About this RNA
An RNA of 177 nucleotides, treated with DMS and 2A3 and read out base by base. Source: RMDB library OK2TRN, as collected in RNAgym. For 2A3 the reverse transcriptase was SuperScript II with manganese. The 2A3 profile rests on 9,693 reads. High 2A3 reactivity points to a flexible backbone, as in loops and unpaired stretches. Conditions: 150 mM KOAc, 10 mM MgCl2 and 150 mM bicine (pH 8.5), 24 C.

RNA sequence: GGGAACGACUCGAGUAGAGUCGAAAAUGCGGGCGUCAGGAACAUCUGCUUUUCAGAGUUGCCGAGCGAGAUGGGCAGGAGCCAAUCUGUUUUAAGAGGGGAUUACUUCCACCGUAUGUCGGGAGUGUCUAUGACUACUUUUCGAAGUAGUCAUAGAAAAAGAAACAACAACAACAAC
Reactivity to DMS in 0.01 (KOAc 150mM, MgCl2 10mM, bicine 150mM(pH8.5), 24C), signal-to-noise 9, nucleotides 027 to 126: u010g030c070g020g010g010c070g020u000c080a090g010g000a110a060c060a060u000c020u010g010c220u000u000u000u010c050a080g000a110g010u000u000g010c030c030g000a110g010c060g010a070g010a060u000g010g000g010c050a080g010g000a120g010c040c040a040a060u000c030u000g010u000u010u010u000a080a080g010a100g010g000g010g000a110u010u000a040c030u000u000c010c010a070c050c230g000u000a070u010g010u000c120g020g000g000a040g010u000g010
Reactivity to 2A3 in 0.01 (KOAc 150mM, MgCl2 10mM, bicine 150mM(pH8.5), 24C), signal-to-noise 6, nucleotides 027 to 126: u150g010c050g020g030g020c030g050u080c050a050g060g050a030a020c000a130u020c010u030g050c000u110u070u140u150c040a050g010a050g100u070u080g080c000c010g000a020g020c030g030a050g000a070u050g000g040g000c050a020g030g060a020g020c010c010a010a050u030c030u030g130u070u130u100u220a080a030g040a050g010g020g010g000a010u060u060a040c020u030u010c000c000a030c010c030g090u160a080u220g110u070c080g020g000g010a030g020u060g020